[RMDB]
RNA sequence: GGGAACGACUCGAGUAGAGUCGAAAAAAAAGAUUUCUGAGACAAACACGCUUCACAACGUGCGGCAAAGAAACAUUGUUUAUGCAAAGGCACUUCGCAAUGUGUGCUCAAACAUUGCUUAUUCAAAAAAAGAUUUUAGACUUCGGUCUAAAAUCAACGAUGUUUAUCUCUUCGGAGAUAAACAUCGAAAAGAAACAACAACAACAAC
Reactivity to 2A3 in 0.01 (KOAc 150mM, MgCl2 10mM, bicine 150mM(pH8.5), 24C), signal-to-noise 2, nucleotides 027 to 156: a000a000a000a030g070a030u100u100u050c060u090g080a090g020a090c060a060a130a040c020a010c030g030c010u130u110c070a050c000a170a080c010g010u010g000c010g020g000c000a010a030a130g030a020a050a010c040a070u110u080g100u080u160u180a150u170g020c060a040a050a030g130g000c000a010c010u010u020c030g000c010a000a020u010g000u000g040u000g010c070u070c180a000a040a020c020a020u020u000g010c000u060u080a120u110u170c120a080a060a020a000a000a000a000g000a000u000u000u000u000a000g000a010c000u000u060c300g060g000u000c000u000a000a000a000a010u000c000a000a000
Notes: Conditions: 150 mM KOAc, 10 mM MgCl2 and 150 mM bicine (pH 8.5), 24 C. This 207-nucleotide RNA was probed chemically with 2A3. For 2A3 the reverse transcriptase was SuperScript II with manganese.